[RMDB]
Source: RMDB library OK2TRN, as collected in RNAgym.
The record gives the reactivity of an RNA of 177 nucleotides to DMS.
For DMS, 771 sequencing reads were counted.

RNA sequence: GGGAACGACUCGAGUAGAGUCGAAAACGCAACCAGCCGCUGGGCUGGUACACGCAAGGCCUUGCCCCCUACCUGCCGGGGCUGUCGGACCCGAAAGACGCCGCCGAGGGCUGAUGGGUGUGCCGGCCCGUACACAGGUCUUCGGACCUGUGUACGGAAAAGAAACAACAACAACAAC
Reactivity to DMS in 0.01 (KOAc 150mM, MgCl2 10mM, bicine 150mM(pH8.5), 24C), signal-to-noise 1, nucleotides 027 to 126: c090g010c120a070a080c070c010a070g020c030c090g020c210u000g020g020g020c020u030g020g000u010a000c030a080c040g040c000a060a300g000g000c020c010u030u020g000c000c010c000c010c020u000a150c150c040u000g000c100c130g020g000g010g030c000u010g010u000c010g030g000a070c020c030c010g010a100a110a180g000a090c070g030c010c020g020c000c010g000a280g000g010g010c050u010g000a190u000g010g000g050u000g000u000g010c000c070g020g000c020